[RMDB]
RNA sequence: GGGAACGACUCGAGUAGAGUCGAAAAGAAUUGGUAUGUAAGCUACAACUUCCGGUAGCUGCGUCACACUUUAAGAGUGUGCAUACUGAGCCGAAGCUCAGCUUCGGUCCCCCAAGGGAAGCGCAAAACCAUACGAUAGCUUCGGCUAUCGUAUGGUAAAAGAAACAACAACAACAAC
Reactivity to DMS in 0.01 (KOAc 150mM, MgCl2 10mM, bicine 150mM(pH8.5), 24C), signal-to-noise 4, nucleotides 027 to 126: g000a070a060u000u020g000g000u000a010u000g000u010a300a200g000c000u000a000c000a030a070c060u010u000c000c000g000g030u000a010g010c000u020g000c000g010u000c010a000c000a000c000u000u000u060a170a030g010a010g010u000g000u010g000c000a010u000a000c000u000g020a020g000c000c000g000a000a010g020c020u070c210a130g000c000u000u000c000g000g000u010c020c010c000c170c200a160a100g040g010g000a020a080g020c300g000c200a090a060a170
Reactivity to 2A3 in 0.01 (KOAc 150mM, MgCl2 10mM, bicine 150mM(pH8.5), 24C), signal-to-noise 7, nucleotides 027 to 126: g090a030a100u020u020g000g000u000a000u000g000u000a000a020g000c000u000a000c000a120a080c010u010u000c000c000g010g000u000a000g000c000u000g000c000g000u000c000a000c000a000c010u080u120u280a300a120g220a000g240u010g010u000g010c000a000u000a010c000u000g000a000g000c000c000g000a000a010g000c020u090c300a040g000c000u020u010c000g000g000u000c010c000c000c010c010a030a050g090g000g000a000a020g010c070g010c100a080a110a010
An RNA of 177 nucleotides, treated with DMS and 2A3 and read out base by base. The RNA was probed in 150 mM KOAc, 10 mM MgCl2 and 150 mM bicine (pH 8.5) at 24 C. The data come from the RNA Mapping Database (RMDB), library OK1LIB.